[RMDB]
RNA sequence: GGGAACGACUCGAGUAGAGUCGAAAACGCCGUCGUAGUUCAUGAUCAGCACCACCGCCAACGCGGUCCGAAGUCCGAAUGACAGCGCCAAGGCGACGCGACGGCCAUGCUGCAGCCGGUCGAGUGCGGAUAUAACUCACUUCGGUGAGUUAUAUCCAAAAGAAACAACAACAACAAC
Reactivity to DMS in 0.01 (KOAc 150mM, MgCl2 10mM, bicine 150mM(pH8.5), 24C), signal-to-noise 6, nucleotides 027 to 126: c150g020c010c010g020u000c020g020u000a110g010u010u000c070a080u010g000a070u010c070a100g000c060a110c040c050a090c050c020g010c010c060a080a120c210g000c020g000g020u010c050c070g000a100a110g000u000c050c060g000a060a100u000g010a050c070a080g010c020g000c040c070a070a150g010g020c030g010a060c100g000c010g000a050c020g000g020c020c080a030u010g000c030u000g000c060a090g010c040c000g010g020u000c040g000a090g010u010g010c170
Reactivity to 2A3 in 0.01 (KOAc 150mM, MgCl2 10mM, bicine 150mM(pH8.5), 24C), signal-to-noise 4, nucleotides 027 to 126: c040g000c020c010g040u010c010g030u050a190g060u090u100c050a050u150g090a150u080c040a010g070c010a040c020c000a020c010c000g000c020c030a090a030c070g000c020g020g020u030c020c030g060a110a030g070u010c050c040g060a090a060u120g020a040c020a030g020c020g030c030c030a070a060g070g000c020g030a030c020g010c010g020a020c000g010g000c000c010a080u090g010c000u020g010c000a030g040c010c000g050g000u060c030g040a040g050u110g030c040
An RNA of 177 nucleotides, treated with DMS and 2A3 and read out base by base. 2A3 adducts were read by reverse transcription with SuperScript II with manganese. Conditions: 150 mM KOAc, 10 mM MgCl2 and 150 mM bicine (pH 8.5), 24 C. For 2A3, 6,673 sequencing reads were counted. For DMS the reverse transcriptase was MarathonRT. The data come from the RNA Mapping Database (RMDB), library OK2TST.